[RMDB]
RNA sequence: GGGAACGACUCGAGUAGAGUCGAAAAGAUAUGGAGGACGGCACGUGCCAGGUCCUGUGUCGGAAACGACACCUGACCGGUAAUACGUGCCCGUCCUCCUAAGUCAAAUCUACGCUUCGGCGUAGAACUCACUACCCUACUUCGGUAGGGUAGUGAGAAAAGAAACAACAACAACAAC
Reactivity to 2A3 in 0.01 (KOAc 150mM, MgCl2 10mM, bicine 150mM(pH8.5), 24C), signal-to-noise 1, nucleotides 027 to 126: g040a030u120a070u200g010g000a010g020g000a010c030g010g000c050a010c000g050u040g060c110c160a130g010g000u010c000c020u020g000u010g020u010c020g020g000a050a100a020c010g000a040c000a000c030c020u010g000a020c000c050g050g010u020a190a040u240a200c000g000u000g000c010c010c010g000u010c000c000u010c000c010u000a040a000g000u000c010a000a000a060u000c000u000a000c000g010c020u070u150c300g170g000c000g020u010a020g000a000a020
Reactivity to DMS in 0.01 (KOAc 150mM, MgCl2 10mM, bicine 150mM(pH8.5), 24C), signal-to-noise 2, nucleotides 027 to 126: g000a010u000a300u000g020g000a050g000g000a020c030g020g000c030a000c020g000u000g020c050c010a300g040g000u000c000c080u010g040u010g010u000c000g010g020a150a150a250c000g010a040c000a010c010c040u010g000a020c000c000g000g000u000a090a150u000a150c000g020u000g000c150c030c020g010u000c000c000u000c000c000u010a000a090g010u010c070a060a130a120u000c000u000a010c000g020c000u000u030c220g060g040c000g010u010a000g000a070a170